Background:
This 177-nucleotide RNA was probed chemically with 2A3 and DMS. The reactions ran in a buffer of 150 mM KOAc, 10 mM MgCl2 and 150 mM bicine (pH 8.5), at 24 C. Source: RMDB libraries RFM100 and RFMREP, as collected in RNAgym.
RNA sequence: GGGAACGACUCGAGUAGAGUCGAAAAAAGUUGGAAAGCUUUACCAGAGAGGGUGAUAGUCCCCUGGAAGUAACUAAAGAGGCUACGAGGAAAGAUAUCCUGAGUACCAUGCGUCAUUAUUCGCGUGAUUGUAGGAGACAUUCGUGUCUCCUACAAUAAAAGAAACAACAACAACAAC
Reactivity to 2A3 in 0.01 (KOAc 150mM, MgCl2 10mM, bicine 150mM(pH8.5), 24C), signal-to-noise 5, nucleotides 027 to 126: a000a000g060u050u040g030g010a070a060a050g030c030u060u080u070a110c020c010a010g080a010g040a100g070g030g000u150g100a180u120a120g140u130c010c020c000c000u010g030g010a010a020g050u080a050a090c090u080a110a020a010g090a040g050g000c030u000a000c040g030a050g040g040a130a060a000g090a100u150a060u090c020c010u040g010a010g040u020a020c010c000a020u060g000c010g030u090c020a130u050u180a070u100u100c010g030c020g020u030g040
Reactivity to DMS in 0.01 (KOAc 150mM, MgCl2 10mM, bicine 150mM(pH8.5), 24C), signal-to-noise 8, nucleotides 027 to 126: a040a040g000u010u000g000g010a090a090a100g010c020u000u000u010a150c040c010a090g020a150g010a100g010g000g020u000g010a150u020a120g000u020c020c000c020c020u010g000g000a100a040g000u020a060a090c120u020a040a080a090g010a090g000g000c080u010a030c050g000a070g000g000a040a080a090g010a120u040a070u000c000c010u000g010a120g010u010a060c130c010a020u000g010c020g010u000c180a080u020u030a140u020u000c020g010c020g020u010g010